Chemical mapping of a 177-nucleotide RNA with DMS and 2A3. DMS (dimethyl sulfate) methylates the pairing face of unpaired adenines and cytosines. The RNA was probed in 150 mM KOAc, 10 mM MgCl2 and 150 mM bicine (pH 8.5) at 24 C.
RNA sequence: GGGAACGACUCGAGUAGAGUCGAAAAGGGCGCUGCGCUGCAACGGCCUGCGAGCUCCCCAUCCGACCCGUCUUGAAACACGGACCAAGGAGUCUGACAUGCGUGCGAGUCGACGGGUUCUGAAACCUUGAGGGCUAAAAUUCGUUUUAGCCCUCAAAAAAGAAACAACAACAACAAC
Reactivity to DMS in 0.01 (KOAc 150mM, MgCl2 10mM, bicine 150mM(pH8.5), 24C), signal-to-noise 5, nucleotides 027 to 126: g020g010g020c140g040c050u000g020c050g030c080u020g000c050a140a080c130g010g000c010c030u000g000c070g010a060g010c070u000c020c000c000c080a120u020c020c060g000a030c020c000c000g000u000c010u030u000g000a110a160a150c070a050c010g040g000a060c040c030a220a120g020g010a100g010u030c030u010g000a120c190a130u010g010c040g020u000g000c060g000a180g010u020c100g010a010c020g000g000g000u020u030c030u000g010a100a070a080c130c070
Reactivity to 2A3 in 0.01 (KOAc 150mM, MgCl2 10mM, bicine 150mM(pH8.5), 24C), signal-to-noise 1, nucleotides 027 to 126: g030g010g000c000g000c010u040g070c020g020c040u070g030c130a230a100c130g120g000c010c000u000g000c000g000a010g000c020u060c000c000c000c000a030u090c040c030g000a000c000c000c000g000u030c000u060u140g090a000a000a060c050a030c020g050g000a020c060c060a150a140g200g000a210g030u020c000u050g060a030c020a090u160g010c040g020u010g000c010g040a060g030u000c000g020a000c000g000g010g000u020u060c000u010g000a060a000a020c000c000